RNA sequence: GGGAACGACUCGAGUAGAGUCGAAAACGCAAAGCUGCAGCGCGGCGCUCUGGAGGCCUUGCCCCGCGCACUGUUCUUUACAUGGCCCGACGUGAGGGCACUUCGCGGGCAGUGCUGCGGCCUCGUGAAACUGCCCCUAAGUUCGCUUAGGGGCAAACUAUACAUGUCUAUUCGUAGACAUGUAUAGAAAAGAAACAACAACAACAAC
Reactivity to DMS in 0.01 (KOAc 150mM, MgCl2 10mM, bicine 150mM(pH8.5), 24C), signal-to-noise 2, nucleotides 027 to 156: c040g010c000a040a060a050g010c020u000g010c030a040g010c040g020c020g000g010c050g030c050u000c050u030g000g010a120g020g020c030c080u000u010g010c000c000c000c000g030c060g040c020a060c020u000g010u000u000c050u010u000u000a120c050a080u020g030g020c020c030c000g020a100c060g030u000g000a140g020g020g040c030a040c020u010u000c030g020c150g010g010g060c010a090g010u000g010c010u010g020c030g020g000c000c000u000c120g010u000g000a170a040a090c080u010g010c000c000c000c010u010a010a020g010u000u000c300g000c020u000u000a030g010g020g010g080c000a000a000a010
Reactivity to 2A3 in 0.01 (KOAc 150mM, MgCl2 10mM, bicine 150mM(pH8.5), 24C), signal-to-noise 7, nucleotides 027 to 156: c040g020c010a040a020a010g000c010u010g000c010a010g040c010g010c020g180g090c080g030c070u050c040u090g100g020a040g030g030c030c090u070u130g010c000c000c000c000g020c000g020c020a030c030u030g040u150u060c060u080u160u160a080c060a110u140g060g010c020c030c030g080a150c030g030u050g030a210g010g020g000c030a020c010u020u030c010g020c070g050g010g000c010a010g010u010g010c000u010g000c000g000g000c000c000u000c010g000u030g010a090a050a030c040u040g000c000c000c000c000u010a000a010g010u030u100c180g070c130u000u000a000g010g000g000g000c000a000a000a000